Chemical mapping of a 207-nucleotide RNA with 2A3.
The RNA was probed in 150 mM KOAc, 10 mM MgCl2 and 150 mM bicine (pH 8.5) at 24 C.
The data come from the RNA Mapping Database (RMDB), library ARCHII.

RNA sequence: GGGAACGACUCGAGUAGAGUCGAAAACUCUGGGCCGGGUGGUUCCAGCGUAAGCUGGGCCGCUGCAGUGUCAUUUACAGAGAAUCGCGAGCAGGGCCGGGUUACUUGGCUCUGUAGCUAAAGGUAAGGUAACUCGCUGAUGACCGGCCUGCCGACCGAGAGAUCAUGUGUUCGCACAUGAUCUCUCAAAAGAAACAACAACAACAAC
Reactivity to 2A3 in 0.01 (KOAc 150mM, MgCl2 10mM, bicine 150mM(pH8.5), 24C), signal-to-noise 1, nucleotides 027 to 156: c010u000c020u020g000g000g010c000c010g000g000g010u000g000g050u300u300c020c000a000g000c040g000u100a000a150g000c000u000g020g030g030c020c000g000c000u090g020c070a060g020u020g020u130c000a020u050u110u130a090c050a020g120a000g010a140a020u110c050g000c000g030a020g010c000a010g000g000g080c000c060g010g000g080u070u080a110c130u110u180g020g000c000u000c010u010g000u040a030g010c000u110a210a060a000g060g000u080a110a020g030g020u060a080a090c000u020c070g030c080u030g030a070u060g060a160c000c030g000g010c000c000u010g000c030c040g030a150c010c010